RNA sequence: GGGAACGACUCGAGUAGAGUCGAAAAUCAAACUGGUUAACGGACUUGACAAAGCUUUGAUACCUACCAGGGGGUGAGAAGAGACAAGGGCGCUACCAGCUAGUUAAACCAACAGCAAAGCUUAUACUAAGUGCUGUGAACCAUCUUAAGAGAUGAACAUCUGUGUAAAGUUCGCUUUACACAGAUGAAAAGAAACAACAACAACAAC
Reactivity to DMS in 0.01 (KOAc 150mM, MgCl2 10mM, bicine 150mM(pH8.5), 24C), signal-to-noise 2, nucleotides 027 to 156: u000c030a060a070a080c030u000g000g020u010u000a040a120c030g000g000a110c030u000u000g040a130c090a050a130a170g010c020u000u010u010g010a280u010a100c030c010u000a280c080c060a120g030g010g050g000g040u000g000a150g000a080a030g000a160g050a160c020a070a050g020g020g020c040g000c010u000a020c010c020a030g050c040u020a100g000u000u000a030a090a100c030c040a080a040c020a070g020c000a020a100a080g020c040u000u000a170u000a090c050u000a070a120g000u010g000c000u020g010u000g030a050a070c090c020a010u000c020u000u010a090a080g000a130g030a030u020g010a140a300
Reactivity to 2A3 in 0.01 (KOAc 150mM, MgCl2 10mM, bicine 150mM(pH8.5), 24C), signal-to-noise 4, nucleotides 027 to 156: u150c020a020a060a040c030u040g000g020u110u090a030a030c040g060g070a010c050u040u070g050a080c070a070a130a010g030c010u030u020u010g040a060u120a130c010c010u060a080c040c110a060g090g020g000g010g030u050g040a050g010a050a040g030a010g020a020c010a010a060g020g030g060c020g010c030u020a020c000c020a010g010c020u010a010g030u060u100a050a090a060c010c010a030a030c030a010g000c010a120a070a000g010c040u090u100a110u050a220c080u140a100a030g030u050g080c010u010g010u010g020a020a010c030c010a010u020c010u030u100a110a050g100a010g010a120u050g020a030a030
An RNA of 207 nucleotides, treated with DMS and 2A3 and read out base by base. The RNA was probed in 150 mM KOAc, 10 mM MgCl2 and 150 mM bicine (pH 8.5) at 24 C. Values cover nucleotides 27 to 156. For 2A3 the reverse transcriptase was SuperScript II with manganese.